[RMDB]
RNA sequence: GGGAACGACUCGAGUAGAGUCGAAAAGAUAUGGAGCUGUAAGAACUUUUGACGACUGUCUUCGGAAACGAAGAAACAGUCGAUAAGUUUAUCAGCUCCUAAGUCAAAGUGUGACUUCGGUCACACACCACUGAUGUGUCUUCGGACACAUCAGUGGAAAAGAAACAACAACAACAAC
Reactivity to DMS in 0.01 (KOAc 150mM, MgCl2 10mM, bicine 150mM(pH8.5), 24C), signal-to-noise 1, nucleotides 027 to 126: g000a090u000a300u000g010g060a010g000c000u010g000u000a150a300g010a000a010c000u000u000u000u010g100a250c120g010a020c000u000g000u000c000u000u000c000g040g040a100a160a220c010g000a000a000g010a130a030a080c000a000g000u000c050g000a000u020a040a040g000u000u000u000a300u020c000a030g000c000u000c000c000u000a000a100g010u000c030a150a100a030g000u000g000u000g000a000c000u000u030c160g090g000u000c000a000c010a000c020a120
Reactivity to 2A3 in 0.01 (KOAc 150mM, MgCl2 10mM, bicine 150mM(pH8.5), 24C), signal-to-noise 2, nucleotides 027 to 126: g040a000u060a040u170g010g000a000g070c040u020g000u170a300a280g040a070a100c020u220u260u300u300g300a160c090g000a000c010u020g010u060c000u020u030c030g060g010a050a110a050c010g010a010a020g000a030a160a000c010a000g000u000c000g010a000u010a010a010g000u020u010u010a100u080c010a010g010c000u000c000c000u000a040a010g020u000c030a110a080a100g010u020g000u000g000a000c000u040u160c300g120g000u000c010a000c000a000c010a010